Structure probing data (DMS and 2A3) for a 177-nucleotide construct. It was measured as part of the RMDB library OK2TRN. The reactions ran in a buffer of 150 mM KOAc, 10 mM MgCl2 and 150 mM bicine (pH 8.5), at 24 C. For DMS, 1,235 sequencing reads were counted.
RNA sequence: GGGAACGACUCGAGUAGAGUCGAAAAACUGGGGUGAAGUCGUAACAAGGUAACCGUAGGGGAACCUGCGGUUGGAUCACCUCCUUACCUUAAAGAAGCGUACUUUGCAGUGCUCACACAGAUUGUCUCUCUUUGGUACUUUCGAGUACCAAAGAGAAAAAGAAACAACAACAACAAC
Reactivity to DMS in 0.01 (KOAc 150mM, MgCl2 10mM, bicine 150mM(pH8.5), 24C), signal-to-noise 2, nucleotides 027 to 126: a110c070u010g000g000g000g030u000g000a050a110g010u000c050g000u010a130a120c130a040a030g030g000u000a030a020c000c020g040u000a020g000g000g000g030a090a110c000c010u000g000c010g000g030u010u000g000g000a080u000c220a060c100c210u000c020c030u000u000a030c040c020u000u000a080a140a080g000a070a140g000c030g020u000a040c030u010u000u000g030c020a090g030u000g000c050u000c030a050c120a090c060a080g000a100u010u000g020u000c040
Reactivity to 2A3 in 0.01 (KOAc 150mM, MgCl2 10mM, bicine 150mM(pH8.5), 24C), signal-to-noise 1, nucleotides 027 to 126: a000c030u030g000g050g040g060u000g020a040a030g060u050c020g000u110a130a050c090a120a040g010g010u010a040a000c010c010g000u020a000g040g020g000g040a020a090c010c020u080g020c050g000g000u030u000g010g020a000u060c010a030c010c010u020c000c000u020u040a040c000c000u030u050a130a130a100g120a180a000g010c020g000u070a020c020u010u080u050g020c050a040g000u010g130c030u020c050a050c000a040c000a050g040a300u110u060g160u070c030